[RMDB]
RNA sequence: GGGAACGACUCGAGUAGAGUCGAAAAUUUACACAAGUGUAGCAAGAAUGGUGGUAGACCAUAUAAGCUCUUUUUAAGACUGCUUGUUGGAUCUUUUCAUAACGAAUCACAGAUUGAGCUCUUAAAAGCUUAGGCAUGAAUUCGUUCAUGCCUAAGCAAAAGAAACAACAACAACAAC
Reactivity to 2A3 in 0.01 (KOAc 150mM, MgCl2 10mM, bicine 150mM(pH8.5), 24C), signal-to-noise 1, nucleotides 027 to 126: u000u000u060a070c050a010c000a000a110g040u030g000u050a060g070c060a130a050g100a190a030u010g040g010u060g140g010u060a050g010a110c020c030a020u020a000u010a120a020g000c000u000c000u020u050u050u060u090a010a030g020a010c090u090g020c010u020u100g050u020u030g010g050a060u020c000u040u060u080u110c100a080u150a190a060c060g010a040a000u020c000a030c000a180g070a090u070u130g000a030g000c010u000c010u110u060a060a090a000a030
Reactivity to DMS in 0.01 (KOAc 150mM, MgCl2 10mM, bicine 150mM(pH8.5), 24C), signal-to-noise 1, nucleotides 027 to 126: u010u010u020a090c060a090c120a060a060g030u000g000u000a060g040c090a090a170g000a180a040u000g020g000u000g040g000u020a020g000a040c000c010a040u010a030u010a060a060g010c020u020c030u010u010u010u030u020a040a040g010a120c160u000g000c000u000u000g000u000u020g000g000a120u000c010u000u010u000u010c030a120u000a070a120c050g010a050a050u000c040a080c120a040g000a100u010u000g010a090g080c060u000c020u020u000a030a020a090a100